Structure probing data (DMS) for a 177-nucleotide construct. For DMS, 536 sequencing reads were counted. The reactions ran in a buffer of 150 mM KOAc, 10 mM MgCl2 and 150 mM bicine (pH 8.5), at 24 C.
[RMDB]
RNA sequence: GGGAACGACUCGAGUAGAGUCGAAAAUCCGAACAGGGCGCUGUAGUAGCACGCUCAAGACCCGAAGCGGAGUGAUCUAGCCAUGGGCAGGUUGAAGCGGAGGUAAGACUUCGUGGAGGACCGAACCCACGCGUCCCAAGUUCGCUUGGGACGCGUGAAAAGAAACAACAACAACAAC
Reactivity to DMS in 0.01 (KOAc 150mM, MgCl2 10mM, bicine 150mM(pH8.5), 24C), signal-to-noise 1, nucleotides 027 to 126: u010c000c000g000a130a130c120a180g040g020g020c080g010c170u000g070u000a070g080u000a100g000c130a040c070g000c000u000c090a100a110g010a230c080c030c020g000a120a140g010c010g020g000a020g010u030g000a100u010c090u030a090g040c060c050a140u000g010g000g010c090a230g000g030u000u000g000a280a130g000c010g000g000a000g000g060u000a070a100g010a270c010u000u000c000g010u000g000g000a140g000g000a050c000c030g000a070a150c030c000